[RMDB]
RNA sequence: GGGAACGACUCGAGUAGAGUCGAAAAAAGUUGCACCAGGUACGGAUACCAGACGUUGGCAAACAGGGUGACAUGAGGAUCACCCAUGUACUGUCCCUUGGCAGCCGUACCUGGUGCUGGUGAAAAACCUAAGUAUUAACUUCGGUUAAUACUUAGGAAAAGAAACAACAACAACAAC
Reactivity to DMS in 0.01 (KOAc 150mM, MgCl2 10mM, bicine 150mM(pH8.5), 24C), signal-to-noise 9, nucleotides 027 to 126: a070a080g000u000u000g020c000a010c000c000a010g000g000u000a010c000g000g000a050u000a070c000c000a020g010a050c100g000u010u000g020g000c020a050a070a030c020a040g000g010g010u000g010a010c030a180u010g020a160g020g010a190u000c010a010c000c000c000a020u000g020u000a070c200u000g010u000c010c050c030u010u000g000g010c070a020g000c000c000g010u000a000c000c000u000g000g000u000g000c000u000g000g000u010g000a060a070a060a080a090
Reactivity to 2A3 in 0.01 (KOAc 150mM, MgCl2 10mM, bicine 150mM(pH8.5), 24C), signal-to-noise 6, nucleotides 027 to 126: a000a010g280u120u040g000c000a000c000c000a000g000g010u000a000c010g000g010a020u020a050c000c010a000g060a090c080g110u250u170g030g000c020a030a080a080c030a060g000g000g010u000g000a020c040a090u300g180a120g150g060a080u010c000a010c010c010c000a010u010g000u020a070c060u020g030u050c000c010c010u020u020g020g000c020a020g030c000c000g000u000a000c000c000u010g000g000u000g000c000u000g000g010u110g050a110a020a010a010a000